[RMDB]
RNA sequence: GGGAACGACUCGAGUAGAGUCGAAAAGAUAUGGAGAGCGUCUAAUCACCCGUUCGGAAACGAACGUGGUGAUGACGCCUCCUAAGUCAAACAUAAUUACUCGAAGUUCGCUUCGAGUAAUUAUGAAGUAUGAAUCGAUGUUCGCAUCGAUUCAUACAAAAGAAACAACAACAACAAC
Reactivity to 2A3 in 0.01 (KOAc 150mM, MgCl2 10mM, bicine 150mM(pH8.5), 24C), signal-to-noise 2, nucleotides 027 to 126: g020a010u060a020u100g020g000a010g010a030g000c010g020u000c040u120a100a070u000c000a010c010c000c000g000u000u010c010g020g020a090a080a060c020g000a010a000c030g060u190g000g000u010g000a000u000g000a000c000g000c000c000u000c000c000u010a060a000g020u020c030a080a040a080c010a010u010a000a000u000u020a000c000u000c000g010a020a000g020u070u120c250g090c180u000u010c000g000a000g000u000a000a000u000u020a000u000g000a000a010
Reactivity to DMS in 0.01 (KOAc 150mM, MgCl2 10mM, bicine 150mM(pH8.5), 24C), signal-to-noise 3, nucleotides 027 to 126: g000a040u000a300u010g010g000a000g000a110g020c010g030u000c000u010a120a050u000c000a000c000c000c000g000u010u000c020g010g000a070a080a130c000g010a000a010c000g010u020g010g030u000g010a000u000g010a010c000g010c000c000u000c000c000u000a010a080g010u000c050a150a120a300c010a010u000a000a010u000u000a000c000u000c000g010a010a010g020u000u020c250g030c000u000u000c000g020a020g010u000a000a000u000u000a010u000g020a070a100